[RMDB]
Background
An RNA of 177 nucleotides, treated with DMS and 2A3 and read out base by base. The RNA was probed in 150 mM KOAc, 10 mM MgCl2 and 150 mM bicine (pH 8.5) at 24 C.
RNA sequence: GGGAACGACUCGAGUAGAGUCGAAAAUAAUCAAGAUGAAUCGUUUUUAGUUUGCUUGCUUACCUUAUGGGCCAGCAUGAGAUCGACUUGAAUCUUUUUAUGUAGGCAGAUAGCGACGGAAUUUAAAAGUCCUAAAUCACUUCGGUGAUUUAGGACUAAAAGAAACAACAACAACAAC
Reactivity to DMS in 0.01 (KOAc 150mM, MgCl2 10mM, bicine 150mM(pH8.5), 24C), signal-to-noise 2, nucleotides 027 to 126: u020a150a130u050c120a030a130g000a100u060g030a090a060u020c030g000u000u000u010u010u040a060g000u020u020u020g000c030u000u010g020c030u000u040a100c120c150u040u010a100u050g000g000g010c080c080a090g000c000a010u020g000a000g010a010u000c010g000a030c180u040u010g000a090a020u000c000u000u020u010u030u040a010u000g020u080a050g000g040c030a060g010a060u010a060g000c000g010a010c120g020g000a020a080u010u050u020a000a040a090
Reactivity to 2A3 in 0.01 (KOAc 150mM, MgCl2 10mM, bicine 150mM(pH8.5), 24C), signal-to-noise 2, nucleotides 027 to 126: u210a010a120u090c060a000a000g010a000u060g050a050a080u080c040g020u020u000u060u030u060a220g030u020u060u060g000c020u000u000g020c000u020u080a220c010c010u170u050a120u300g050g000g000c000c000a010g010c000a030u030g010a000g000a050u000c000g030a040c050u050u090g030a090a050u000c020u000u170u040u040u000a030u140g080u020a010g050g020c000a000g050a130u040a010g010c010g070a020c020g140g000a040a050u130u070u180a090a260a060